[RMDB]
RNA sequence: GGGAACGACUCGAGUAGAGUCGAAAACAGUGCACUCUGGAACGAGCUCGAGAAACAGGGUCAGGUACCAGAUAUGAAGGCAUGCAGCGUAAUGUGUCAUGGAAAGACUUAUCGGUGCACGAUGGGCAUUAUAAUUGAAUUUCGAUUCAAUUAUAAUAAAAGAAACAACAACAACAAC
Reactivity to DMS in 0.01 (KOAc 150mM, MgCl2 10mM, bicine 150mM(pH8.5), 24C), signal-to-noise 9, nucleotides 027 to 126: c070a110g010u010g010c020a020c030u010c020u000g000g010a100a100c050g000a290g000c020u000c020g010a120g010a130a100a140c200a110g000g010g000u000c040a130g000g010u020a120c020c010a030g000a060u020a060u020g010a130a070g000g010c020a030u000g000c060a070g010c090g010u030a090a070u030g010u010g010u020c020a040u010g000g000a090a100a060g010a090c080u010u020a040u010c040g010g010u000g000c020a030c010g000a070u010g000g000g000c100
Reactivity to 2A3 in 0.01 (KOAc 150mM, MgCl2 10mM, bicine 150mM(pH8.5), 24C), signal-to-noise 9, nucleotides 027 to 126: c040a000g020u020g040c020a010c030u040c010u020g020g020a050a020c020g010a040g030c010u020c020g140a130g100a100a160a040c090a080g010g010g030u030c020a030g040g060u060a060c010c010a010g010a020u100a050u160g110a080a030g060g000c010a010u050g000c020a060g040c050g080u130a110a120u170g030u020g030u070c030a040u050g050g070a090a070a020g020a020c000u040u060a080u120c030g030g000u030g010c030a010c020g010a040u080g010g020g020c030